The record gives the reactivity of an RNA of 177 nucleotides to 2A3 and DMS. DMS adducts were read by reverse transcription with MarathonRT. Values cover nucleotides 27 to 126. For 2A3, 934 sequencing reads were counted. It was measured as part of the RMDB library OK2TST. For DMS, 614 sequencing reads were counted.
[RMDB]
RNA sequence: GGGAACGACUCGAGUAGAGUCGAAAAGACGUGUGUCCGCCUGAUCCUAACUACUUCAACACACCGGGAGACAUAACGAUCCACAUAACAGACACGAACAACAGGGUGCCUCGAGUGGAAGAGGACAACAGCGUACCGUAUUCGUACGGUACGCUGUAAAAGAAACAACAACAACAAC
Reactivity to 2A3 in 0.01 (KOAc 150mM, MgCl2 10mM, bicine 150mM(pH8.5), 24C), signal-to-noise 1, nucleotides 027 to 126: g050a010c000g080u090g070u020g030u070c040c000g070c030c030u090g000a130u080c000c020u040a060a040c060u080a020c010u080u110c150a100a050c040a030c040a030c020c030g040g040g000a060g010a010c010a010u110a140a020c000g020a120u030c000c010a070c010a080u170a070a040c010a030g100a050c010a000c140g040a160a000c020a110a000c030a070g000g020g130u140g020c000c030u050c010g060a040g040u080g030g000a040a070g020a020g010g020a020c020a000
Reactivity to DMS in 0.01 (KOAc 150mM, MgCl2 10mM, bicine 150mM(pH8.5), 24C), signal-to-noise 1, nucleotides 027 to 126: g020a070c100g010u000g010u000g010u040c080c090g000c000c020u000g030a100u000c000c040u000a010a040c190u020a090c080u010u000c040a060a080c100a090c060a080c030c050g000g010g020a120g000a170c050a070u020a140a040c140g010a070u000c000c020a070c010a130u000a090a210c120a010g000a050c070a020c060g030a030a060c060a050a070c100a060g010g000g000u000g000c000c010u000c010g030a120g000u010g020g010a020a120g000a030g000g000a020c080a020